RNA sequence: GGGAACGACUCGAGUAGAGUCGAAAAUGUAUCCAUCUCCAGAUGUAGAGAGGACGUCGUUUCCAUCAUGCUGGAGCGAUAUCGCAGUCAUAGGGUGCAAUAAUGCAUAGUGCGAGACGAGUUUACUAAUCCGCGCGAAUUCUGCUUGCGAUGAGGCGUAUGCAACCUCUUUCGAGAGGUUGCAUACAAAAGAAACAACAACAACAAC
Reactivity to 2A3 in 0.01 (KOAc 150mM, MgCl2 10mM, bicine 150mM(pH8.5), 24C), signal-to-noise 4, nucleotides 027 to 156: u100g010u060a070u080c030c000a080u010c010u000c010c000a020g000a070u080g050u210a150g020a020g050a090g130g060a050c020g080u110c060g000u030u060u010c050c030a070u110c030a020u170g120c000u020g010g010a010g020c040g010a020u040a020u180c040g010c020a020g030u070c040a070u160a110g060g000g030u040g020c020a020a200u200a200a070u250g000c010a030u020a040g020u040g030c020g010a100g010a080c090g000a030g130u130u160u130a140c070u100a050a080u020c010c030g000c010g000c000g020a030a060u090u070c020u060g060c020u050u090g010c000g040a040u040g040a050g110g090c090
Reactivity to DMS in 0.01 (KOAc 150mM, MgCl2 10mM, bicine 150mM(pH8.5), 24C), signal-to-noise 2, nucleotides 027 to 156: u000g060u000a110u010c000c040a220u020c000u010c010c000a150g010a140u030g020u010a050g000a040g020a200g040g000a080c100g020u020c000g040u010u000u000c010c020a210u000c060a090u010g010c090u000g020g000a050g010c120g010a140u000a050u000c040g000c010a170g010u010c060a130u000a070g030g000g000u010g000c010a060a170u000a060a110u020g000c030a140u000a120g020u000g040c030g020a170g010a050c030g030a110g000u000u000u010a130c140u010a120a050u000c020c030g050c020g000c090g030a070a100u000u000c030u010g020c030u000u010g010c020g010a090u000g000a070g010g000c150